Background: An RNA of 177 nucleotides, treated with DMS and read out base by base. Reactivities are given for positions 27 through 126. DMS adducts were read by reverse transcription with MarathonRT.
RNA sequence: GGGAACGACUCGAGUAGAGUCGAAAAGUAACUGAAUCCACUGGGUCACUUACUAAAAACACCAAUUCACACUUAUUCCCAGAUGCGUUGAAUCAGAAUCUUUGAGUGGUGGGGCCAGGAGUUUGUAGUUGCAAGUCGUAUUCGUACGACUUGCAACAAAAGAAACAACAACAACAAC
Reactivity to DMS in 0.01 (KOAc 150mM, MgCl2 10mM, bicine 150mM(pH8.5), 24C), signal-to-noise 1, nucleotides 027 to 126: g020u000a050a050c120u000g010a060a080u000c000c040a160c170u020g040g000g020u010c020a030c070u000u010a030c070u040a020a040a100a120a080c160a080c070c030a090a020u010u020c000a050c040a030c010u010u010a210u010u000c000c000c000a160g010a070u000g040c040g010u010u010g000a030a030u000c080a120g010a080a030u000c070u030u000u000g010a020g030u000g000g020u010g020g010g010g020c040c010a050g000g000a130g000u000u020u000g020u040a060